[RMDB]
RNA sequence: GGGAACGACUCGAGUAGAGUCGAAAAGGACAGGUAUGAGAACGCAGGCAUAAAAUUGAGCGAUGAUGAUAUAUUGAGCCAGAUCGAGAUCUAUCUAGGGAUGAUGAGUGAUGGAAUCAGGGAAGAACUUAUGCCUAACUUUCGAGUUAGGCAUAAGAAAAGAAACAACAACAACAAC
Reactivity to 2A3 in 0.01 (KOAc 150mM, MgCl2 10mM, bicine 150mM(pH8.5), 24C), signal-to-noise 3, nucleotides 027 to 126: g050g000a040c030a020g050g040u080a060u160g040a030g020a080a010c030g000c050a020g040g000c020a040u120a100a140a030a090u110u110g020a020g030c070g030a040u070g010a010u030g050a000u060a010u020a030u180u120g020a010g020c010c010a030g010a060u060c040g030a010g000a090u020c020u050a030u020c030u080a090g040g080g000a050u080g020a030u040g020a030g060u060g020a050u050g020g030a040a040u050c020a030g050g000g030a020a040g020a060a020
Reactivity to DMS in 0.01 (KOAc 150mM, MgCl2 10mM, bicine 150mM(pH8.5), 24C), signal-to-noise 9, nucleotides 027 to 126: g000g000a060c080a050g020g010u000a050u010g010a100g010a090a100c110g020c060a070g010g010c050a080u000a040a050a070a100u010u000g010a100g000c060g020a070u000g000a090u000g010a080u000a070u010a110u000u010g010a110g000c030c060a070g000a080u010c060g010a100g010a070u000c040u000a040u000c060u000a090g000g010g010a060u000g000a060u000g000a080g010u000g000a070u000g000g000a060a070u000c060a070g010g000g010a070a070g000a070a160
An RNA of 177 nucleotides, treated with 2A3 and DMS and read out base by base. For 2A3 the reverse transcriptase was SuperScript II with manganese. The RNA was probed in 150 mM KOAc, 10 mM MgCl2 and 150 mM bicine (pH 8.5) at 24 C. DMS adducts were read by reverse transcription with MarathonRT. The data come from the RNA Mapping Database (RMDB), library OK2TRN. For 2A3, 8,055 sequencing reads were counted.